[RMDB]
RNA sequence: GGGAACGACUCGAGUAGAGUCGAAAAUCCGCCCACCGCAACGGUGUCGGGCGAGGGUCGUCACGCCGGCAACGACCCCUUUCGGCGAAAGCUUCGCCAGGCCUCCCCUGGGGGCCAACGGGACAUACGGUUUUCCCUUGUUCGCAAGGGAAAACCGAAAAGAAACAACAACAACAAC
Reactivity to 2A3 in 0.01 (KOAc 150mM, MgCl2 10mM, bicine 150mM(pH8.5), 24C), signal-to-noise 1, nucleotides 027 to 126: u000c000c000g050c050c030c000a010c000c000g120c200a290a040c120g050g000u120g130u120c050g110g000g000c000g000a170g000g000g000u060c000g000u000c110a090c060g070c000c060g030g000c130a080a000c000g030a040c000c000c000c000u000u190u210c070g000g010c000g000a000a040a070g070c180u070u100c070g020c000c000a000g060g000c000c000u130c000c000c000c040u060g000g000g040g030g000c000c000a000a060c030g030g000g000a000c000a050u130a050
Chemical mapping of a 177-nucleotide RNA with 2A3. Reactivities are rounded to 0.1 and cut off at 0 and 3. 2A3 adducts were read by reverse transcription with SuperScript II with manganese. It was measured as part of the RMDB library RFM100. The reactions ran in a buffer of 150 mM KOAc, 10 mM MgCl2 and 150 mM bicine (pH 8.5), at 24 C. Values cover nucleotides 27 to 126. High 2A3 reactivity points to a flexible backbone, as in loops and unpaired stretches.